[RMDB]
RNA sequence: GGGAACGACUCGAGUAGAGUCGAAAAAUAUGCUGUAGUUUGUAUCAUUGUUUACAAGGCUAUUAAACUGAUGAAUGUGUUUGAUCCUGUUGGGCCUCAGUAAGACAUUCUUAAAGAUGGAAAUCCAUGAAAAACGUGUAGCUAGUAACUGAUAAAACUAUAUCGGCAUGUUCGCAUGCCGAUAUAGAAAAGAAACAACAACAACAAC
Reactivity to 2A3 in 0.01 (KOAc 150mM, MgCl2 10mM, bicine 150mM(pH8.5), 24C), signal-to-noise 3, nucleotides 027 to 156: a000u090a010u080g000c020u010g040u080a090g030u030u050u130g060u050a050u060c010a050u040u160g030u070u050u000a040c040a060a090g060g030c010u030a030u080u140a150a100a060c100u100g020a040u080g020a120a010u050g030u000g070u040u080u060g040a050u040c020c020u070g080u080u100g020g010g000c000c030u000c000a020g010u020a040a000g060a010c010a030u030u030c000u060u130a140a110a020g050a020u030g000g030a060a190a040u020c030c000a020u040g050a050a030a050a010a010c050g010u050g000u030a010g000c030u000a020g010u020a040a060c030u010g010a030u040a080a040a000a000
Reactivity to DMS in 0.01 (KOAc 150mM, MgCl2 10mM, bicine 150mM(pH8.5), 24C), signal-to-noise 1, nucleotides 027 to 156: a150u000a060u010g030c000u000g040u000a100g000u010u000u000g000u000a060u010c020a140u000u000g020u000u020u000a090c030a080a100g010g040c020u000a080u010u000a070a090a090c060u000g020a060u010g020a090a040u000g030u010g000u000u000u000g000a000u020c060c040u000g040u010u000g010g000g080c050c000u030c010a110g030u000a040a070g030a070c070a090u000u000c040u000u010a100a060a050g000a030u010g040g010a040a040a130u000c020c040a030u000g000a040a070a000a070a100c120g010u000g040u010a060g040c010u000a150g020u000a060a060c060u000g000a080u000a050a070a020a140